[RMDB]
RNA sequence: GGGAACGACUCGAGUAGAGUCGAAAAGCUCCUUUGCGCUUUUUUUUCGGAUUAGGCGUGGAGGCGAAAGUCACCCUCCUCGCAUCGCAAGUUCGUGCAUGCGACUUACACGUAGGGCGAGGGGUGGAAAACAGUAUGGGAUUCGUCCCAUACUGAAGUAACCACGAUCGUUCGCGAUCGUGGUUACAAAAGAAACAACAACAACAAC
Reactivity to 2A3 in 0.01 (KOAc 150mM, MgCl2 10mM, bicine 150mM(pH8.5), 24C), signal-to-noise 1, nucleotides 027 to 156: g070c020u140c030c000u000u040u000g020c030g000c000u060u020u000u000u000u000u060u140c300g190g010a060u070u000a040g000g020c010g000u020g020g000a000g000g010c060g040a150a090a010g030u070c060a020c010c000c000u000c010c010u000c010g020c050a100u050c000g070c040a080a080g050u050u160c000g000u100g140c170a080u170g000c020g030a000c010u030u090a010c120a010c070g140u100a230g090g120g000c000g000a010g000g030g000g000u210g050g020a040a050a020a040c000a030g010u000a000u000g010g000g000a030u060u090c140g100u020c000c000c000a000u000a000c000u010g010a030a020

Conditions: 150 mM KOAc, 10 mM MgCl2 and 150 mM bicine (pH 8.5), 24 C.
Structure probing data (2A3) for a 207-nucleotide construct.
The data come from the RNA Mapping Database (RMDB), library M2RFPK.